[RMDB]
RNA sequence: GGGAACGACUCGAGUAGAGUCGAAAAACACGUGUUCGAACGAUCGAUCGAGUGUGUGUACGUGAUCUCACACGAACUCGUGUGAGUUCGUACUCACACGUACGAGAACGAUCACGUGUGUUCACGAACACACUCGAGUGAUCGAGAACUCUCUCGAAACAACGUUCCGAUUCGUCGGAACGUUGUUAAAAGAAACAACAACAACAAC
Reactivity to 2A3 in 0.01 (KOAc 150mM, MgCl2 10mM, bicine 150mM(pH8.5), 24C), signal-to-noise 2, nucleotides 027 to 156: a030c070a010c090g090u050g030u030u010c020g020a150a090c020g010a080u040c000g040a050u010c000g000a030g000u000g010u000g000u020g080u100a060c000g010u010g060a030u010c070u050c080a000c000a000c000g040a120a060c070u030c040g050u070g000u030g000a000g000u030u160c170g120u200a030c000u030c020a000c010a000c000g000u040a010c020g020a030g070a180a110c000g090a180u080c040a020c030g000u000g000u010g000u020u010c050a000c030g010a000a000c030a010c000a010c000u010c000g010a030g030u110g020a010u000c030g000a030g000a030a010c050u000c000u000c010u000c050g000a110